[RMDB]
RNA sequence: GGGAACGACUCGAGUAGAGUCGAAAACGGAGAUUGUUCGCAAUCUCCGAAAUACUAAGACCGAAGCUUAUGGCGAUGUCACUUCCCUUGGGCGCAAAACUAAAACCGCCGGCUUCGGCCGGCGGAAGGAAAGAUACAUGUUCGCAUGUAUCUUUCCAAAAGAAACAACAACAACAAC
Reactivity to DMS in 0.01 (KOAc 150mM, MgCl2 10mM, bicine 150mM(pH8.5), 24C), signal-to-noise 1, nucleotides 027 to 126: c020g010g000a000g000a010u010u000g020u010u010c230g000c030a000a010u010c000u010c000c000g000a010a010a110u000a140c200u000a110a100g020a020c010c050g020a100a100g020c040u000u010a100u000g000g020c030g000a070u010g010u010c050a070c100u000u000c010c000c000u020u000g010g000g000c010g010c090a060a060a030a160c200u000a070a080a130a080c000c020g030c000c020g060g050c000u000u010c270g010g030c000c000g000g020c000g020g000a010a030
Reactivity to 2A3 in 0.01 (KOAc 150mM, MgCl2 10mM, bicine 150mM(pH8.5), 24C), signal-to-noise 1, nucleotides 027 to 126: c000g000g000a000g000a000u000u020g000u070u070c160g000c070a030a000u000c000u010c000c000g000a000a020a010u130a020c030u050a100a000g030a020c010c000g050a060a000g020c000u110u080a070u300g080g000c030g050a060u090g050u110c030a030c080u050u060c030c000c060u030u050g110g000g000c050g000c060a110a010a010a080c020u140a020a040a090a220c020c010g070c020c100g040g060c000u050u060c220g040g040c040c030g020g130c000g000g010a010a010
Chemical mapping of a 177-nucleotide RNA with DMS and 2A3. For DMS, 1,104 sequencing reads were counted. Reactivities are given for positions 27 through 126. The reactions ran in a buffer of 150 mM KOAc, 10 mM MgCl2 and 150 mM bicine (pH 8.5), at 24 C.